[RMDB]
RNA sequence: GGGAACGACUCGAGUAGAGUCGAAAAGAGCGUGAAUUGCACUUCGUAGGUUACGUCUGCGUUAACAACGUUACAGUUAAUUAUAACUGCAAACAAUAACAAUUCUUACGCUGUAGCUGCCUAAACACCAGCAUAGCGUGAUCCGUCUGACUUCACCCAUUCCAAUGGACUUCGGUCCAUUGGAAUGAAAAGAAACAACAACAACAAC
Reactivity to DMS in 0.01 (KOAc 150mM, MgCl2 10mM, bicine 150mM(pH8.5), 24C), signal-to-noise 2, nucleotides 027 to 156: g030a130g020c030g050u010g000a050a060u000u000g000c040a090c090u010u010c020g050u000a060g000g000u000u000a040c110g010u000c040u000g010c050g030u000u010a040a150c100a040a100c090g000u000u000a010c010a000g000u000u000a060a260u010u010a160u010a020a030c000u010g000c030a030a040a080c070a170a140u000a130a090c030a040a120u000u000c020u000u010a040c000g040c010u020g010u000a110g060c010u000g020c000c100u000a090a050a130c150a100c290c030a040g010c000a130u000a020g000c030g040u000g010a020u010c020c050g010u000c010u010g020a110c020u000u010c030a040c010c000
Reactivity to 2A3 in 0.01 (KOAc 150mM, MgCl2 10mM, bicine 150mM(pH8.5), 24C), signal-to-noise 9, nucleotides 027 to 156: g050a010g010c040g030u100g060a070a070u100u110g040c060a030c100u090u070c040g000u000a000g000g020u090u020a010c020g030u020c030u010g010c030g120u070u090a020a010c000a000a000c010g000u010u020a010c010a010g000u000u030a060a180u280u150a200u080a260a020c010u040g070c130a090a080a080c070a090a130u210a100a010c030a060a070u170u040c030u080u070a010c000g000c000u000g010u010a050g010c000u000g000c000c000u030a030a020a010c010a010c010c000a000g010c010a010u020a000g000c000g010u010g020a020u030c040c050g060u030c080u050g060a100c020u050u030c090a150c040c010

The record gives the reactivity of an RNA of 207 nucleotides to DMS and 2A3. Values cover nucleotides 27 to 156. It was measured as part of the RMDB library RSTRND. DMS adducts were read by reverse transcription with MarathonRT. The 2A3 profile rests on 10,258 reads. The RNA was probed in 150 mM KOAc, 10 mM MgCl2 and 150 mM bicine (pH 8.5) at 24 C. For 2A3 the reverse transcriptase was SuperScript II with manganese.